[RMDB]
RNA sequence: GGGAACGACUCGAGUAGAGUCGAAAACGCCUAGUGGGCCGCCGCUGGUAAGCAGCGCCGGCAAUGAGGACACAACCUCGUGCGCGGGCAAGGGACCCCAGCUGCGCACACAGACGAAGGGCGCGGGCGCGUCGCGACAGCAGGGCGGUGGCCAUAGCUUGUAAGGCGUGUUCGCACGCCUUACAAGAAAAGAAACAACAACAACAAC
Reactivity to 2A3 in 0.01 (KOAc 150mM, MgCl2 10mM, bicine 150mM(pH8.5), 24C), signal-to-noise 2, nucleotides 027 to 156: c080g050c000c010u000a010g030u020g000g000g000c000c000g000c000c000g000c030u000g030g060u190a120a020g020c030a010g000c000g010c040c010g080g000c000a010a060u150g000a020g040g030a030c010a020c020a220a190c020c000u020c030g000u000g010c090g010c050g050g000g000c070a150a150g110g000g080a240c040c140c000c020a030g040c000u060g000c000g050c040a010c010a010c020a040g130a040c090g120a100a090g060g090g030c300g000c000g230g010g000c010g000c000g200u300c060g010c020g060a020c010a010g050c010a020g060g010g000c000g000g000u000g010g000c000c000a000u000a010g050

This 207-nucleotide RNA was probed chemically with 2A3. Reactivities are given for positions 27 through 156. 2A3 is a SHAPE reagent: it acylates the 2'-hydroxyl of flexible nucleotides of all four kinds.